This 207-nucleotide RNA was probed chemically with 2A3. Reactivities are rounded to 0.1 and cut off at 0 and 3. The reactions ran in a buffer of 150 mM KOAc, 10 mM MgCl2 and 150 mM bicine (pH 8.5), at 24 C. Values cover nucleotides 27 to 156. For 2A3 the reverse transcriptase was SuperScript II with manganese.

RNA sequence: GGGAACGACUCGAGUAGAGUCGAAAACGAUCCUCGAGAGAGGAUCGACGAGUCUUCGGACUCGAUUACCGCGAGGAUGUGCCGCGGGGCUACGAUGGUAUUGUGGGAAAGAAUACCAUUGUACCUUCUUGUCGUAGCCGAACAACUAGCACGUCGACAGGAGCAUGCGAUUCGUCGCAUGCUCCUGAAAAGAAACAACAACAACAAC
Reactivity to 2A3 in 0.01 (KOAc 150mM, MgCl2 10mM, bicine 150mM(pH8.5), 24C), signal-to-noise 2, nucleotides 027 to 156: c020g000a000u000c000c000u020c000g030a050g000a000g020a000g030g000a000u010c000g000a010c020g000a000g000u000c000u070u250c240g090g000a000c000u010c000g000a030u110u250a070c000c000g010c000g000a030g160g010a030u020g000u020g000c000c000g000c000g000g040g040g000c000u020a000c010g010a030u110g000g000u000a000u010u050g030u000g020g020g100a000a230a060g160a010a170u120a100c000c000a000u010u000g000u000a000c000c000u270u260c150u190u290g000u020c000g010u010a000g000c000c010g010a050a010c030a010a010c030u040a010g000c010a000c010g000u000c020g000a020